[RMDB]
RNA sequence: GGGAACGACUCGAGUAGAGUCGAAAAGGUCGCACCGCCAUUUGACGAACGAACGCCAAGCCUAAGCCGUCUUUGUGCAUUAAGUGGGUAAAGGUUGGUUAGUAGCGGUUUCCCCCACGACAAGGGGGGUACAGCCCUGAUUCGUCAGGGCUGUACCAAAAGAAACAACAACAACAAC
Reactivity to DMS in 0.01 (KOAc 150mM, MgCl2 10mM, bicine 150mM(pH8.5), 24C), signal-to-noise 5, nucleotides 027 to 126: g000g000u010c040g010c090a130c050c020g000c010c020a120u020u020u000g000a110c110g010a080a120c030g020a110a090c160g020c010c000a030a070g030c020c010u010a090a300g000c010c000g010u000c020u040u000u010g000u010g020c140a080u020u010a040a040g020u000g000g020g040u000a030a230a020g010g000u000u000g000g010u000u010a040g000u010a060g000c050g000g000u000u010u010c010c000c000c010c010a060c050g000a030c200a050a190g000g000g000g010
Reactivity to 2A3 in 0.01 (KOAc 150mM, MgCl2 10mM, bicine 150mM(pH8.5), 24C), signal-to-noise 9, nucleotides 027 to 126: g020g010u080c010g000c030a040c020c000g030c010c010a070u110u060u140g090a080c070g050a160a020c000g010a000a010c010g030c010c010a080a150g070c080c000u030a060a030g020c000c010g130u070c050u040u060u050g130u080g030c040a070u120u140a070a050g050u140g120g070g010u040a070a080a030g020g000u020u030g010g000u010u010a010g000u020a000g010c000g010g000u020u030u050c010c000c000c000c000a020c010g070a030c020a060a070g000g000g000g000

Chemical mapping of a 177-nucleotide RNA with DMS and 2A3. It was measured as part of the RMDB libraries RFM100 and RFMREP. In probing experiments dimethyl sulfate is read out at A N1 and C N3, which are open when not base-paired.